[RMDB]
RNA sequence: GGGAACGACUCGAGUAGAGUCGAAAAGGCGCCCGCCGGUAGAUGCCGGACCGCCGCCGGGUCCGGCGCAGUCGAGCGUGAGGCAGCGGUCGCCUACCGGGGCGGUGUCUCGCCGCCUUCUGGUCGCCCCGUAUUGGAUGUUCGCAUCCAAUACGGGAAAAGAAACAACAACAACAAC
Reactivity to DMS in 0.01 (KOAc 150mM, MgCl2 10mM, bicine 150mM(pH8.5), 24C), signal-to-noise 1, nucleotides 027 to 126: g010g010c000g000c080c000c000g030c040c040g000g020u000a080g000a140u010g030c040c030g020g030a020c000c000g000c060c040g010c040c060g030g000g020u030c030c000g020g010c040g020c100a050g000u020c030g000a100g010c020g040u060g000a130g040g020c110a140g010c040g000g000u000c000g000c020c000u000a010c000c000g010g000g000g000c000g000g000u000g000u010c100u060c090g010c000c000g000c020c000u010u030c030u030g040g020u000c000g030c080
Reactivity to 2A3 in 0.01 (KOAc 150mM, MgCl2 10mM, bicine 150mM(pH8.5), 24C), signal-to-noise 3, nucleotides 027 to 126: g010g000c020g000c020c000c000g020c000c000g020g040u060a040g030a160u230g030c030c010g050g020a010c020c000g070c030c000g010c040c030g040g000g000u010c030c000g000g000c010g000c000a030g040u170c040g060a060g060c060g030u190g080a130g110g020c050a010g010c000g010g060u010c000g010c000c000u000a020c000c000g000g000g000g000c010g010g000u040g040u040c070u040c060g000c010c000g010c020c000u050u100c080u080g020g000u030c010g020c020